RNA sequence: GGGAACGACUCGAGUAGAGUCGAAAAGAACGGGCUACCCGCCCGCUUCACCGAGGAGCAGCUUGAACGCAUCUGGAGGGGAGGACCAAAGAAGCGUGAUGGCUAACGGCCAAUCCCCCAAAACCAACGCUAAUAUCCUAUUCGUAGGAUAUUAGCGAAAAGAAACAACAACAACAAC
Reactivity to DMS in 0.01 (KOAc 150mM, MgCl2 10mM, bicine 150mM(pH8.5), 24C), signal-to-noise 5, nucleotides 027 to 126: g020a040a050c020g000g000g030c040u000a200c270c200c140g020c000c000c000g010c100u000u010c030a150c040c020g000a120g010g010a090g010c080a050g030c040u010u000g010a130a060c100g020c050a060u010c030u010g010g010a200g010g010g010g030a110g020g000a110c030c040a050a120a070g020a060a040g020c060g000u000g010a150u000g000g000c020u000a060a120c090g020g010c000c010a060a140u000c010c010c000c040c030a070a020a070a110c120c140a070a170
Reactivity to 2A3 in 0.01 (KOAc 150mM, MgCl2 10mM, bicine 150mM(pH8.5), 24C), signal-to-noise 4, nucleotides 027 to 126: g010a020a000c020g000g010g000c040u100a160c030c050c010g020c000c010c010g000c090u030u030c020a070c030c040g040a070g040g040a040g040c060a010g000c060u060u070g040a070a020c040g000c020a060u050c040u080g070g060a100g040g040g000g020a080g020g090a030c000c020a070a100a000g050a060a000g010c030g030u060g050a030u050g050g000c010u020a050a040c030g030g000c020c010a020a200u060c000c000c000c000c000a000a080a020a020c050c020a070a010